[RMDB]
RNA sequence: GGGAACGACUCGAGUAGAGUCGAAAAGAGAUGGCGAGAGCCAUCGGUAGUAUAGCGAAAAUCAUAAAUGAGAAGAGCUCUAAACGCCUAAGUAGAGUUAAAAUAAUUAGACAGGCCCUACUACAAACACGGCCUCGAACGUUCGCGUUCGAGGCAACAUCUAUGCGCUCUUCGGAGCGCAUAGAUGAAAAGAAACAACAACAACAAC
Reactivity to 2A3 in 0.01 (KOAc 150mM, MgCl2 10mM, bicine 150mM(pH8.5), 24C), signal-to-noise 2, nucleotides 027 to 156: g160a010g000a000u010g010g000c010g010a070g010a020g000c000c000a000u000c020g000g000u010a010g000u000a050u040a050g040c060g080a100a100a070a050u130c070a120u120a160a130a100u160g010a060g070a210a060g090a040g010c000u020c000u020a090a070a010c050g000c000c000u020a170a000g020u000a020g010a030g050u300u300a000a040a000a000u120a010a030u160u020a010g010a030c030a000g010g010c010c000c000u030a020c000u010a020c030a010a200a040c140a030c160g100g000c000c000u000c000g000a000a000c030g030u100u050c160g000c010g040u000u000c010g020a010g000g000c010a010a000
This 207-nucleotide RNA was probed chemically with 2A3. Values cover nucleotides 27 to 156. It was measured as part of the RMDB library M2RFPK. The RNA was probed in 150 mM KOAc, 10 mM MgCl2 and 150 mM bicine (pH 8.5) at 24 C.